[RMDB]
RNA sequence: GGGAACGACUCGAGUAGAGUCGAAAAGGGGAGUGUGAUCCAGGUACCGCCGUAGAAACUGGAUUACGACGUCUACCCGGGAUUCAAACCCGGUCCCCCUCAGAGGUGACUCUGAGUGAAAGGUCGCGCUUAGCGCACUGAUGAGUUCCUGCAAUGGGGAAGUGAUACUGUUCGCAGUAUCACUUCCAAAAGAAACAACAACAACAAC
Reactivity to 2A3 in 0.01 (KOAc 150mM, MgCl2 10mM, bicine 150mM(pH8.5), 24C), signal-to-noise 1, nucleotides 027 to 156: g020g000g010g000a100g030u090g010u020g000a060u000c100c020a010g040g010u050a070c000c110g300c090c200g020u130a010g110a060a260a000c000u040g010g000a000u040u040a000c060g060a000c030g120u000c000u030a050c000c010c070g000g000g000a090u300u300c130a140a000a100c000c000c000g030g000u010c030c000c000c000c000u000c010a020g010a010g000g020u050g080a140c000u000c000u050g000a000g000u040g060a160a090a070g040g030u070c070g040c000g000c080u140u280a070g010c000g030c000a040c030u060g000a130u170g000a040g030u110u140c000c010u010g020c090a130a140u150g050g000
Chemical mapping of a 207-nucleotide RNA with 2A3. Reactivities are given for positions 27 through 156. The reactions ran in a buffer of 150 mM KOAc, 10 mM MgCl2 and 150 mM bicine (pH 8.5), at 24 C. For 2A3, 424 sequencing reads were counted.